An RNA of 177 nucleotides, treated with DMS and read out base by base. The data come from the RNA Mapping Database (RMDB), library RFMREP. Conditions: 150 mM KOAc, 10 mM MgCl2 and 150 mM bicine (pH 8.5), 24 C. For DMS the reverse transcriptase was MarathonRT.
RNA sequence: GGGAACGACUCGAGUAGAGUCGAAAAUAGCAUGUAAUAUCCUUCCCGUUCCUGUGCAGAUGUCUGAGGCUUCUUUCUCCUUUAGUCAAAUCUGAUUUCUAUUUCUUCUUGGUUAAUACCCCCAGAGCAAUCACUAAACCUUCGGGUUUAGUGAUUGAAAAGAAACAACAACAACAAC
Reactivity to DMS in 0.01 (KOAc 150mM, MgCl2 10mM, bicine 150mM(pH8.5), 24C), signal-to-noise 1, nucleotides 027 to 126: u000a060g000c060a060u000g010u000a070a040u000a080u000c050c010u000u000c010c020c010g020u010u000c010c000u000g020u000g030c030a050g000a070u000g000u000c060u000g020a140g010g010c120u000u000c040u010u000u000c020u000c040c030u000u010u000a060g010u010c060a000a130a100u000c070u020g000a120u000u000u000c050u000a080u000u000u000c010u000u000c050u000u000g000g000u000u010a000a150u010a300c050c010c010c050c030a120g000a100g020